[RMDB]
RNA sequence: GGGAACGACUCGAGUAGAGUCGAAAACAGUCAAAGUGAAGGCGGGCCAGACCAUCGCCGCAUUCUACCAGAGCACCGUCAUGAUCUUUGGCACGAUGGCUCGCUACAUGCCCAGAGUUAGGGAAAAGACUGCACUAAAUUUCGAUUUAGUGCAGUCAAAAGAAACAACAACAACAAC
Reactivity to DMS in 0.01 (KOAc 150mM, MgCl2 10mM, bicine 150mM(pH8.5), 24C), signal-to-noise 5, nucleotides 027 to 126: c090a130g000u000c070a040a080a130g000u010g010a190a120g000g020c010g020g000g030c020c030a110g010a120c090c090a060u010c100g040c050c040g000c100a070u010u000c050u000a080c080c050a090g010a080g010c040a060c020c020g000u010c130a070u000g000a070u000c030u000u000u000g010g000c010a060c120g000a100u000g010g010c020u000c020g010c040u000a040c100a060u000g000c020c010c020a120g000a080g010u000u010a090g010g010g000a080a080a090a110
Reactivity to 2A3 in 0.01 (KOAc 150mM, MgCl2 10mM, bicine 150mM(pH8.5), 24C), signal-to-noise 1, nucleotides 027 to 126: c030a000g080u090c050a060a090a000g040u090g120a120a030g050g000c020g000g000g000c020c000a000g030a090c010c010a070u070c060g010c060c030g020c000a020u150u010c020u070a090c020c060a050g020a030g060c050a090c080c010g080u060c060a200u120g050a070u050c020u020u050u040g010g000c030a000c030g040a050u070g010g000c020u000c020g010c020u050a040c020a070u120g050c000c000c000a020g030a010g110u080u170a070g000g000g030a020a050a030a000
About this RNA:
Structure probing data (DMS and 2A3) for a 177-nucleotide construct. As a SHAPE reagent, 2A3 marks flexible, mostly unpaired nucleotides at the ribose 2'-OH. For 2A3 the reverse transcriptase was SuperScript II with manganese. For 2A3, 4,333 sequencing reads were counted.